[RMDB]
RNA sequence: GGGAACGACUCGAGUAGAGUCGAAAACACAUUCUAUUCGUAGAAUGUGGAACGUAGAGAGAUCGACAGCGUCGGAGCUAUGUCGAACGAGGAAGAGCGCGCAGGGAUCGGGCUUCGGCCCGAUCAAAACAAAAAGUGAUUUCGAUCACUUUUUGUUAAAAGAAACAACAACAACAAC
Reactivity to 2A3 in 0.01 (KOAc 150mM, MgCl2 10mM, bicine 150mM(pH8.5), 24C), signal-to-noise 6, nucleotides 027 to 126: c000a000c000a000u000u010c000u020a040u050u080c170g090u030a000g000a010a010u010g000u010g010g020a060a030c050g090u190a020g030a010g000a000g010a200u030c020g030a010c020a020g030c020g080u130c120g100g070a120g000c020u110a080u200g030u030c010g010a040a030c020g020a050g030g030a070a050g020a010g040c030g010c010g010c030a040g130g050g020a000u000c000g010g010g000c010u060u090c200g090g000c000c000c010g000a000u000c000a000a030
Reactivity to DMS in 0.01 (KOAc 150mM, MgCl2 10mM, bicine 150mM(pH8.5), 24C), signal-to-noise 9, nucleotides 027 to 126: c000a000c000a000u000u000c000u000a020u000u010c170g020u000a010g010a010a000u000g010u000g000g000a070a060c110g010u000a080g010a110g010a140g010a070u000c020g010a040c040a050g000c050g010u000c160g010g000a120g010c030u000a070u000g020u000c010g000a020a100c090g010a110g000g000a050a040g000a040g010c030g010c060g020c110a080g000g010g000a010u000c000g000g000g010c010u000u010c200g030g010c000c000c010g000a000u000c010a030a050
Background
The data come from the RNA Mapping Database (RMDB), library M2PK50. Structure probing data (2A3 and DMS) for a 177-nucleotide construct. The reactions ran in a buffer of 150 mM KOAc, 10 mM MgCl2 and 150 mM bicine (pH 8.5), at 24 C.